[RMDB]
Annotation:
The record gives the reactivity of an RNA of 207 nucleotides to DMS and 2A3.

RNA sequence: GGGAACGACUCGAGUAGAGUCGAAAAAGAUGUGUCCACCAUGCUGCUGAAGGGUCAGCCUUCUCUUUUGUGCUUUCCUGCAGGAAUACCUCAAUAGCAUUCUCCAGCAUGCCAAGGAUUUCAAGGAAUAUCACAGAUCCGUCACAGGCAAAAUCCAAUCCAUAUCACAGUUCGCUGUGAUAUGGAUAAAAGAAACAACAACAACAAC
Reactivity to DMS in 0.01 (KOAc 150mM, MgCl2 10mM, bicine 150mM(pH8.5), 24C), signal-to-noise 3, nucleotides 027 to 156: a100g020a120u000g020u010g010u000c040c010a120c050c030a120u020g030c010u000g030c020u000g010a060a070g010g020g040u000c070a160g000c010c010u000u000c040u020c030u010u000u010u000g030u000g020c140u010u000u010c010c020u000g020c030a220g020g010a060a030u010a040c040c000u000c060a100a170u010a070g010c040a080u000u010c020u000c050c070a110g010c080a070u000g010c040c010a180a150g010g030a110u010u000u000c050a090a100g020g010a080a090u010a050u010c050a070c040a080g000a030u000c010c020g020u000c030a070c060a040g040g020c030a060a040a060a110u000c020c020a120
Reactivity to 2A3 in 0.01 (KOAc 150mM, MgCl2 10mM, bicine 150mM(pH8.5), 24C), signal-to-noise 7, nucleotides 027 to 156: a000g100a070u100g070u030g030u070c020c010a020c030c000a070u090g020c010u020g000c020u060g070a050a050g050g010g040u230c070a040g070c000c010u110u040c030u010c010u020u100u080u090g060u050g030c010u030u050u030c020c010u040g020c070a080g010g070a050a050u160a300c010c010u070c050a090a100u070a090g010c020a020u070u040c050u030c040c020a020g020c020a040u020g000c030c020a040a030g010g000a010u060u040u050c050a050a030g040g020a080a050u090a050u180c040a040c030a070g050a070u050c010c010g060u080c030a020c020a080g050g030c030a040a030a030a080u070c090c020a030
Background
For 2A3 the reverse transcriptase was SuperScript II with manganese. For DMS the reverse transcriptase was MarathonRT. The DMS profile rests on 6,211 reads. Conditions: 150 mM KOAc, 10 mM MgCl2 and 150 mM bicine (pH 8.5), 24 C.